Chemical mapping of a 177-nucleotide RNA with DMS and 2A3. Conditions: 150 mM KOAc, 10 mM MgCl2 and 150 mM bicine (pH 8.5), 24 C. It was measured as part of the RMDB library RFM100. The DMS profile rests on 1,025 reads.

RNA sequence: GGGAACGACUCGAGUAGAGUCGAAAAUUCACAAGCAGUAAAUAAGUGAACCUCGAACCUAUCUAGGAAUACGAUAUAGCGUUACUUCCGAACGGCAAACCAUGGCACUACGAAGUAAACGUAUGAUAUAAGGGGGGGUAUUCGUACCCCCCCUUAUAAAAGAAACAACAACAACAAC
Reactivity to DMS in 0.01 (KOAc 150mM, MgCl2 10mM, bicine 150mM(pH8.5), 24C), signal-to-noise 1, nucleotides 027 to 126: u060u000c000a050c020a210a110g000c110a170g000u040a080a040a070u020a080a230g010u000g030a000a120c020c010u000c030g050a050a160c000c090u000a100u000c120u040a110g000g060a250a070u030a000c000g070a210u000a160u060a010g020c020g000u000u000a040c000u000u000c000c000g050a080a250c200g000g000c010a000a050a110c130c210a070u020g000g000c040a000c000u000a130c300g000a030a010g010u000a010a000a060c000g000u000a000u000g000a300u000
Reactivity to 2A3 in 0.01 (KOAc 150mM, MgCl2 10mM, bicine 150mM(pH8.5), 24C), signal-to-noise 2, nucleotides 027 to 126: u010u050c010a000c000a090a050g100c030a000g230u280a020a180a210u280a200a000g080u080g040a000a000c000c000u000c050g040a050a060c020c000u090a200u300c090u140a020g000g000a170a050u200a100c100g050a060u210a000u060a080g040c050g000u040u020a000c000u000u000c000c000g040a000a000c190g010g000c000a000a000a000c040c020a300u300g030g000c010a050c000u000a000c020g000a000a000g000u020a040a300a000c000g010u020a140u060g030a040u000